[RMDB]
RNA sequence: GGGAACGACUCGAGUAGAGUCGAAAAAGGUGGGCAGUUAACUCGCGUAGUCUGCCCUCCCUGCAAUUGCUCUUGGACCUCCAAAAACAUAGCCUUCGACUCUGUGAAGGAGAAGUUUGUAGAAGAACUCCCCGUCAGUAUUCGUACUGACGGGGAGAAAAGAAACAACAACAACAAC
Reactivity to DMS in 0.01 (KOAc 150mM, MgCl2 10mM, bicine 150mM(pH8.5), 24C), signal-to-noise 1, nucleotides 027 to 126: a030g050g000u000g010g000g020c020a040g010u010u010a000a040c030u000c070g040c300g040u040a010g030u020c010u000g000c000c010c000u010c090c010c020u010g000c080a040a080u000u010g020c060u000c040u010u030g010g010a080c090c080u000c010c030a020a060a080a110a040c070a020u000a080g010c090c150u010u000c040g010a110c040u000c020u000g000u010g010a160a180g000g020a100g000a070a130g010u000u000u000g010u000a130g000a110a100g000a080a230
This 177-nucleotide RNA was probed chemically with DMS. DMS adducts were read by reverse transcription with MarathonRT. It was measured as part of the RMDB library OK2TRN.